[RMDB]
RNA sequence: GGGAACGACUCGAGUAGAGUCGAAAAGGCUCAUAUAGCUACCUGUGUCUUUCUGGACUUGAGCCGGCAUGUAUUGAGUUUAGAGGAAUGCCGCCCGGGUUGCUCUGCUUGCUUGAGUUUAAGACAACAACCUACGAAGGUUCGCCUUCGUAGGUUGAAAAGAAACAACAACAACAAC
Reactivity to DMS in 0.01 (KOAc 150mM, MgCl2 10mM, bicine 150mM(pH8.5), 24C), signal-to-noise 1, nucleotides 027 to 126: g000g010c020u020c130a160u010a160u000a040g010c020u010a060c010c000u000g010u010g030u020c000u010u010u020c120u000g030g000a030c050u010u020g020a060g010c040c090g020g010c040a040u000g010u000a080u010u000g000a110g020u000u000u020a060g000a130g010g000a110a080u000g010c040c030g000c070c040c040g000g010g000u010u000g010c020u010c060u000g000c050u000u000g020c060u010u000g000a040g010u010u010u010a010a060g000a090c110a070a190